This 177-nucleotide RNA was probed chemically with 2A3 and DMS.
The 2A3 profile rests on 13,437 reads.
The data come from the RNA Mapping Database (RMDB), library OK2TST.
Conditions: 150 mM KOAc, 10 mM MgCl2 and 150 mM bicine (pH 8.5), 24 C.
Reactivities are rounded to 0.1 and cut off at 0 and 3.
[RMDB]
RNA sequence: GGGAACGACUCGAGUAGAGUCGAAAAGGCCAAGGCAAAGCCGAGGUACUGCGAGCUCUGCGGCAGGGAGAUACGGGGCGAGGGCCAUGUGGUAAGGCUCGAGGGGGCAGAGCUCCUCGUCUGCGACGGAUGAGUAAUAGUUCGCUAUUACUCAUCCAAAAGAAACAACAACAACAAC
Reactivity to 2A3 in 0.01 (KOAc 150mM, MgCl2 10mM, bicine 150mM(pH8.5), 24C), signal-to-noise 6, nucleotides 027 to 126: g050g000c010c010a010a030g030g000c080a210a110a120g010c000c000g000a020g010g020u090a280c040u060g070c060g010a010g000c000u000c010u010g010c010g040g010c110a060g070g060g010a230g000a070u290a180c070g020g010g060g030c060g030a130g010g010g000c020c020a090u220g050u090g100g140u150a160a120g020g000c010u010c030g010a080g000g000g000g010g000c010a000g000a010g000c000u000c000c010u020c010g120u030c050u080g060c040g060a060c070
Reactivity to DMS in 0.01 (KOAc 150mM, MgCl2 10mM, bicine 150mM(pH8.5), 24C), signal-to-noise 6, nucleotides 027 to 126: g000g020c010c020a060a300g010g010c030a070a120a150g020c030c000g010a300g010g010u000a050c090u000g000c110g020a060g010c020u000c010u010g020c050g010g010c180a170g000g010g010a080g020a190u010a070c120g000g010g000g010c050g010a140g000g000g020c010c020a090u020g010u010g010g010u000a080a120g020g000c030u010c040g000a200g000g000g010g010g000c020a050g000a030g010c020u010c010c030u000c070g000u000c030u000g000c120g010a090c210